[RMDB]
RNA sequence: GGGAACGACUCGAGUAGAGUCGAAAAUGACGCAAGGGAAUGGUAUAGACCAAUAACGCGGCAAUACUUCGUAGUGCUAUCCUUUCUUCCUAUGUAUCGCCUUGCACUACCACUAUGGCUGUGACCCUAAGUACCCCGCGUUCGCGCGGGGUACUUAAAAAGAAACAACAACAACAAC
Reactivity to 2A3 in 0.01 (KOAc 150mM, MgCl2 10mM, bicine 150mM(pH8.5), 24C), signal-to-noise 1, nucleotides 027 to 126: u000g070a000c030g000c040a000a010g060g000g000a090a130u120g050g040u030a040u010a270g120a040c010c010a030a190u100a030a030c030g000c030g000g000c050a030a020u010a140c000u090u140c000g000u000a010g000u000g040c030u070a080u030c040c000u150u030u130c010u040u050c080c030u050a170u160g000u000a170u100c000g130c000c000u000u010g140c120a120c100u120a010c000c000a070c050u000a260u300g050g000c030u030g010u000g140a200c000c000c000